Overview:
Conditions: 150 mM KOAc, 10 mM MgCl2 and 150 mM bicine (pH 8.5), 24 C. An RNA of 177 nucleotides, treated with 2A3 and DMS and read out base by base. Values cover nucleotides 27 to 126. It was measured as part of the RMDB libraries RFM100 and RFMREP.
RNA sequence: GGGAACGACUCGAGUAGAGUCGAAAAACGGUUACAAGGCGGGGUAUCCUGAGUACCGUGGGUUGGAAUUCUCGCGGGAAGCUGGGGGUCAUCAACCCCCAAGGCUAAAUACGUCCCGAGUCCGAUAGUAUGUUACCACAUUCGUGUGGUAACAUACAAAAGAAACAACAACAACAAC
Reactivity to 2A3 in 0.01 (KOAc 150mM, MgCl2 10mM, bicine 150mM(pH8.5), 24C), signal-to-noise 5, nucleotides 027 to 126: a000c020g010g020u100u090a050c050a140a030g050g000c060g010g030g010g030u060a070u130c010c010u100g060a020g020u020a020c000c000g010u030g000g000g010u080u100g110g100a140a190u160u010c000u000c010g010c000g010g010g010a030a010g010c030u040g000g000g000g000g000u010c020a120u070c040a190a120c000c000c000c000c000a000a020g010g000c000u020a060a090a000u130a040c050g100u050c000c000c000g000a040g020u020c010c010g020a020u050a040
Reactivity to DMS in 0.01 (KOAc 150mM, MgCl2 10mM, bicine 150mM(pH8.5), 24C), signal-to-noise 6, nucleotides 027 to 126: a080c040g000g000u000u000a040c070a130a150g010g010c040g010g010g000g010u000a060u010c020c010u020g020a130g000u010a090c020c010g020u000g010g020g020u000u010g010g020a100a110u010u010c010u000c020g030c050g010g000g000a050a110g010c050u000g000g010g000g000g010u020c140a120u050c300a090a120c020c010c000c000c000a000a020g000g010c250u010a060a060a100u020a080c100g010u010c010c000c020g000a160g000u010c010c020g000a140u000a150